[RMDB]
RNA sequence: GGGAACGACUCGAGUAGAGUCGAAAACAGGAAACUGGUUAAUCGUUUUCCUUGGUAGUAUAGCGGACACCAUAAAUAAGAAGAACUCUAAGUGCUUGAGUAGAGUUAAAAUAAUUAGACAGGCAAUUAAGGUACUCCACGUUCGCGUGGAGUACAACUUCUCACUCGACUUCGGUCGAGUGAGAAGAAAAGAAACAACAACAACAAC
Reactivity to 2A3 in 0.01 (KOAc 150mM, MgCl2 10mM, bicine 150mM(pH8.5), 24C), signal-to-noise 1, nucleotides 027 to 156: c020a030g000g040a100a000a050c040u150g020g030u200u280a130a040u210c030g010u060u020u050u020c000c000u000u000g040g000u070a070g010u000a010u070a040g110c050g000g000a030c020a020c030c010a030u090a190a160a030u150a140a040g080a070a000g030a090a000c000u000c000u020a040a010g000u000g230c010u000u040g000a000g000u000a000g030a000g000u160u240a000a000a000a000u110a010a000u170u000a000g000a010c000a000g000g030c000a000a000u130u110a230a050g090g000u000a020c000u000c000c000a010c000g010u040u080c290g010c000g040u000g010g010a000g000u000a000c000a000a010

An RNA of 207 nucleotides, treated with 2A3 and read out base by base. Reactivities are given for positions 27 through 156. The reactions ran in a buffer of 150 mM KOAc, 10 mM MgCl2 and 150 mM bicine (pH 8.5), at 24 C. For 2A3 the reverse transcriptase was SuperScript II with manganese.